[RMDB]
RNA sequence: GGGAACGACUCGAGUAGAGUCGAAAAGAAGUGGCAGGGACAUGCCCCAUAAGCUCGUUCUAGCAACAUAUGUUUGGCUAGUUCGAGCGAUUAGUCUGGAGGAGCGUCCUCUCGCCUCUUUACGAGACACCGGCACCAGGUUCGCCUGGUGCCGGUGAAAAGAAACAACAACAACAAC
Reactivity to 2A3 in 0.01 (KOAc 150mM, MgCl2 10mM, bicine 150mM(pH8.5), 24C), signal-to-noise 1, nucleotides 027 to 126: g070a000a000g020u000g050g000c000a020g060g000g000a020c010a010u170g060c000c000c000c000a020u020a070a060g000c000u000c000g000u000u010c000u000a000g060c040a010a050c070a080u300a110u190g190u200u090u040g080g070c000u000a000g020u000u000c000g010a000g000c000g000a020u000u030a000g110u020c030u070g050g010a160g150g020a020g020c060g040u000c010c000u080c000u050c060g000c000c010u000c000u000u000u010a010c040g070a000g000a170

An RNA of 177 nucleotides, treated with 2A3 and read out base by base. For 2A3 the reverse transcriptase was SuperScript II with manganese. It was measured as part of the RMDB library OK1LIB. Reactivities are given for positions 27 through 126.